[RMDB]
RNA sequence: GGGAACGACUCGAGUAGAGUCGAAAAAGAUUUCGCAUUCUUUGUUGACGGUGUAAGGGUAAAAAAAUCAUGAGCAAGUACGAGUCCCUGCCCACUUUCUGCGAACCUUUGGAGUGGUUUCGAGGAAAAGAAAGGGCUUCCUUCUUCAUCCUACCGAUAAAUUCUGUCUUUUCGAAGACAGAAUUUAAAAAGAAACAACAACAACAAC
Reactivity to DMS in 0.01 (KOAc 150mM, MgCl2 10mM, bicine 150mM(pH8.5), 24C), signal-to-noise 1, nucleotides 027 to 156: a030g000a100u000u000u010c020g020c050a200u000u000c060u060u000u000g030u000u000g000a100c080g020g040u010g000u010a070a080g000g000g000u010a000a000a070a060a040a050a080u010c040a060u010g000a130g040c020a050a060g020u000a100c060g000a110g030u000c010c010c010u000g000c000c010c000a100c080u000u000u000c020u000g000c020g010a060a050c030c030u000u000u000g030g010a160g010u000g020g020u000u000u000c030g030a060g000g000a100a070a030a070g000a040a100a060g000g020g010c040u000u000c020c040u000u000c020u000u000c040a140u000c020c030u000a100c080c030g020a300
Reactivity to 2A3 in 0.01 (KOAc 150mM, MgCl2 10mM, bicine 150mM(pH8.5), 24C), signal-to-noise 1, nucleotides 027 to 156: a010g100a030u110u080u100c050g030c110a040u120u050c060u000u080u120g040u060u060g070a040c030g000g010u050g060u080a040a140g020g020g000u220a150a090a070a060a030a030a110u140c090a070u110g010a010g060c030a030a030g050u100a150c070g020a020g110u100c030c010c000u010g000c000c000c000a030c010u040u040u000c040u080g070c000g010a020a000c000c020u090u110u130g130g010a130g090u110g020g010u080u080u130c030g000a050g020g000a000a000a000a080g010a060a050a010g020g000g000c000u020u050c010c030u010u180c000u050u060c010a050u050c010c000u030a050c030c000g060a040
Record summary:
Chemical mapping of a 207-nucleotide RNA with DMS and 2A3. The reactions ran in a buffer of 150 mM KOAc, 10 mM MgCl2 and 150 mM bicine (pH 8.5), at 24 C. DMS adducts were read by reverse transcription with MarathonRT.